[RMDB]
RNA sequence: GGGAACGACUCGAGUAGAGUCGAAAAAGAUCCACGCUACGGCGUGGAUCACACGUUCAUCCCUAUUGGGACGGAAGUAGGCAUAGUGCCGAAGGAACGCAUUAGUCAUGCGCUACGGCGUAUGACACACAUCAGAGUCACUUCGGUGACUCUGAAACUACUAUUGUGCGUUCGCGCACAAUAGUAGAAAAGAAACAACAACAACAAC
Reactivity to 2A3 in 0.01 (KOAc 150mM, MgCl2 10mM, bicine 150mM(pH8.5), 24C), signal-to-noise 5, nucleotides 027 to 156: a000g010a000u000c000c000a000c010g000c010u020a040c280g120g000c000g000u000g000g000a000u000c000a000c000a000c000g000u010u000c010a010u030c010c010c010u110a300u130u300g010g000g000a000c010g020g010a020a030g020u030a010g020g000c050a100u130a270g160u180g200c010c000g000a010a000g030g010a010a010c010g000c040a040u090u110a010g000u000c000a000u000g000c020g000c020u020a030c240g100g000c010g000u000a000u000g010a000c000a000c000a000c000a070u050c000a000g000a000g000u000c000a000c000u030u120c250g070g010u000g000a000c000u000c000u000g000a000a000a000
Reactivity to DMS in 0.01 (KOAc 150mM, MgCl2 10mM, bicine 150mM(pH8.5), 24C), signal-to-noise 1, nucleotides 027 to 156: a050g010a060u000c000c000a000c000g010c000u000a110c280g110g020c010g100u000g040g010a000u000c030a030c070a000c050g000u000u000c010a140u000c010c000c000u000a190u000u000g010g000g010a030c030g000g000a080a120g020u000a080g000g000c020a250u000a170g020u000g040c000c000g000a170a120g040g000a040a050c030g000c090a090u000u040a080g020u000c050a030u000g000c000g000c000u000a120c230g080g030c000g030u000a000u020g000a020c020a050c040a070c070a100u000c000a020g000a040g020u010c000a020c020u000u020c300g040g040u010g010a000c000u000c000u010g000a000a030a070